Source information
An RNA of 177 nucleotides, treated with DMS and 2A3 and read out base by base. It was measured as part of the RMDB library M2PK90.
[RMDB]
RNA sequence: GGGAACGACUCGAGUAGAGUCGAAAAUAUUAUAGCGCACUAAAGACGCUGAUCUUUAGUUACCAAGGAACUUUAGUGCUGACGUCCGAGUUCCAAGGUCCCAUGUCGGACCUUAGCACUAAUUGAAGGAAACAUGUAGAUUCGUCUACAUGUUUCCAAAAGAAACAACAACAACAAC
Reactivity to DMS in 0.01 (KOAc 150mM, MgCl2 10mM, bicine 150mM(pH8.5), 24C), signal-to-noise 3, nucleotides 027 to 126: u010a070u000u000a090u020a090g010c090g010c170a050c010u000a020a020a020g030a020c000g020c200u010g010a100u000c000u000u000u000a010g000u000u000a100c110c070a090a110g000g020a070a130c070u000u000u000a010g020u000g010c000u000g000a010c220g000u010c030c010g000a040g010u000u010c220c110a050a020g000g000u000c000c000c000a170u010g010u000c020g000g020a030c000c050u010u000a000g010c000a010c010u000a010a020u000u000g000a170a130
Reactivity to 2A3 in 0.01 (KOAc 150mM, MgCl2 10mM, bicine 150mM(pH8.5), 24C), signal-to-noise 2, nucleotides 027 to 126: u110a040u120u200a090u200a120g100c050g030c030a010c030u020a010a010a020g010a000c020g110c300u110g090a170u000c000u000u010u020a020g000u010u090a050c030c050a110a050g170g010a110a130c020u020u040u030a020g000u000g000c000u000g010a010c000g000u000c000c010g000a020g000u130u030c080c010a030a000g050g020u040c010c000c000a070u140g090u040c010g000g030a020c010c000u000u020a000g020c000a010c020u010a040a050u050u100g080a100a030